The data come from the RNA Mapping Database (RMDB), library M2RFPK.
Structure probing data (2A3) for a 207-nucleotide construct.
The RNA was probed in 150 mM KOAc, 10 mM MgCl2 and 150 mM bicine (pH 8.5) at 24 C.
Values cover nucleotides 27 to 156.

[RMDB]
RNA sequence: GGGAACGACUCGAGUAGAGUCGAAAAGGGUGAUGUCUCCUAACUUUUAUCAAUGGGGGCACUCGGUCGUGCUGUGGGUAGAAAUUUUAUUUCGUGCCUACCUUAGACGCUUGUCGUCGGGAGUAUGUGGGACUGAUGAACUUCGGUUCAUCAGUAACAUCGAGCUGUCUUUCGAGACAGCUCGAUGAAAAGAAACAACAACAACAAC
Reactivity to 2A3 in 0.01 (KOAc 150mM, MgCl2 10mM, bicine 150mM(pH8.5), 24C), signal-to-noise 1, nucleotides 027 to 156: g010g030g000u070g050a140u020g020u010c000u010c000c040u050a110a130c080u270u100u200u250a220u200c050a080a040u170g010g000g000g000g000c020a000c030u020c000g050g000u020c020g000u000g100c130u180g010u060g110g000g000u020a040g190a000a050a000u220u300u270u220a190u000u060u180c090g070u060g060c000c020u040a060c090c000u000u080a030g000a030c010g000c050u280u300g100u140c020g000u000c000g000g080g000a060g100u170a150u120g090u130g020g050g000a000c000u020g000a000u000g000a000a000c010u010u010c070g010g000u020u000c000a000u020c000a000g000u000a010a010